[RMDB]
RNA sequence: GGGAACGACUCGAGUAGAGUCGAAAACCAGCUGCAUGGUCCGCACUGGGCAUUGACGCUGUAGUUGUCGGUCAGGUCACUCCGAAUCCGGAUGGUUCUUACAAUGUUGCUUAUCAACUUGUUGACACAAUUGUUAAGAUUUCGAUCUUAACAAUUGAAAAGAAACAACAACAACAAC
Reactivity to 2A3 in 0.01 (KOAc 150mM, MgCl2 10mM, bicine 150mM(pH8.5), 24C), signal-to-noise 7, nucleotides 027 to 126: c000c000a000g020c050u050g020c000a050u080g100g040u050c020c020g030c020a040c130u090g000g020g020c030a060u020u130g050a040c040g000c050u020g050u110a040g050u050u100g090u070c040g000g000u010c020a030g010g010u030c020a010c070u010c020c020g070a120a180u040c070c020g020g010a030u040g040g010u060u040c020u040u040a030c040a050a060u160g020u040u030g040c060u200u140a130u300c020a020a060c020u030u030g030u040u070g050a010c030a000
Reactivity to DMS in 0.01 (KOAc 150mM, MgCl2 10mM, bicine 150mM(pH8.5), 24C), signal-to-noise 9, nucleotides 027 to 126: c030c010a110g010c090u000g010c050a060u000g010g020u010c040c080g010c110a080c100u000g010g000g010c050a080u000u000g000a090c080g010c020u000g010u000a070g010u000u010g010u000c040g010g010u000c060a090g010g010u000c060a100c120u000c020c030g000a130a110u010c090c030g000g010a080u000g010g000u000u010c040u000u000a050c050a040a040u010g010u000u000g010c210u000u010a140u010c040a020a030c050u000u000g010u000u000g000a120c190a160
The record gives the reactivity of an RNA of 177 nucleotides to 2A3 and DMS. Conditions: 150 mM KOAc, 10 mM MgCl2 and 150 mM bicine (pH 8.5), 24 C. For DMS, 36,985 sequencing reads were counted. For 2A3, 10,786 sequencing reads were counted. Source: RMDB library OK2TST, as collected in RNAgym. Values cover nucleotides 27 to 126.